[RMDB]
Source: RMDB library OK1LIB, as collected in RNAgym. An RNA of 177 nucleotides, treated with DMS and 2A3 and read out base by base. The reactions ran in a buffer of 150 mM KOAc, 10 mM MgCl2 and 150 mM bicine (pH 8.5), at 24 C. For DMS, 38,472 sequencing reads were counted.
RNA sequence: GGGAACGACUCGAGUAGAGUCGAAAACGUCGUGAACUAGCGACAAUGCCGUAGAUCGAUCGUUAUCUAACCGAAACAUCGUGACUAGUCGUAGAAUAGAACCAGGAGCGGUCGCUGUCAAACAAAGACGUUUUCUCAGAUUCGUCUGAGGAAACGUAAAAGAAACAACAACAACAAC
Reactivity to DMS in 0.01 (KOAc 150mM, MgCl2 10mM, bicine 150mM(pH8.5), 24C), signal-to-noise 9, nucleotides 027 to 126: c100g000u030c080g010u000g000a100a080c050u030a050g010c010g000a030c010a060a060u040g000c020c040g010u010a080g010a130u010c020g010a040u010c160g010u000u010a090u020c030u020a120a110c280c150g010a030a030a030c060a030u010c010g020u000g000a160c090u010a050g000u010c040g010u020a080g010a080a080u040a060g010a090a110c100c070a100g000g010a090g010c050g000g000u000c020g010c010u000g000u010c050a050a070a060c150a070a100a090g010
Reactivity to 2A3 in 0.01 (KOAc 150mM, MgCl2 10mM, bicine 150mM(pH8.5), 24C), signal-to-noise 9, nucleotides 027 to 126: c040g050u030c020g030u030g080a100a060c040u030a080g010c000g020a010c000a020a060u160g020c010c010g040u060a030g000a100u050c010g000a010u010c110g020u020u030a170u090c040u050a040a110c060c040g020a030a020a010c010a020u020c010g030u030g060a070c030u030a030g060u070c040g070u060a040g070a160a070u090a070g050a060a030c040c030a040g000g050a040g010c010g010g000u010c000g000c020u010g030u030c030a030a050a070c030a030a110a010g110